[RMDB]
RNA sequence: GGGAACGACUCGAGUAGAGUCGAAAAGAUCAUUCGUGAUCAUGAAUACCUUUGUGCUGCUGGAGCGUUGGAGGAUGGCUCGACCCAUUGGGUCGAGAACUACCAUCCCACAACGCGUUGAAAGCAGCACUCUGGUCGCCUGUGUCUUCGGACACAAAUUUGUUUGUGGAUUCGUCCACAAACAAAUAAAAGAAACAACAACAACAAC
Reactivity to DMS in 0.01 (KOAc 150mM, MgCl2 10mM, bicine 150mM(pH8.5), 24C), signal-to-noise 2, nucleotides 027 to 156: g020a040u000c020a090u010u000c200g050u010g010a040u000c030a110u020g000a140a160u000a060c010c000u010u000u010g030u000g020c010u000g000c010u000g000g050a270g020c000g070u000u010g020g010a170g020g000a020u000g000g010c020u000c000g020a030c000c000c000a280u000u010g040g040g020u000c000g000a030g000a050a060c030u000a300c000c000a020u000c000c000c030a120c010a020a000c000g000c020g000u000u000g010a140a230a060g000c000a020g010c010a000c000u000c000u010g030g000u000c090g010c030c020u010g000u000g020u000c000u000u000c190g040g010a040c010a010c000a020a020
Reactivity to 2A3 in 0.01 (KOAc 150mM, MgCl2 10mM, bicine 150mM(pH8.5), 24C), signal-to-noise 5, nucleotides 027 to 156: g000a010u010c010a030u050u260c270g150u050g010a000u000c010a060u150g130a060a110u140a070c000c000u000u000u000g000u000g000c000u000g000c000u010g020g030a020g010c010g020u010u000g050g060a130g040g000a000u000g010g010c000u000c000g000a000c000c000c100a300u170u300g020g000g000u000c000g000a000g000a000a000c010u040a040c000c000a000u010c010c010c000a060c000a000a000c000g000c000g010u060u020g000a000a000a000g000c000a000g000c000a000c000u000c000u000g010g010u010c050g090c030c050u040g010u000g000u000c000u020u060c300g100g000a000c000a000c000a010a170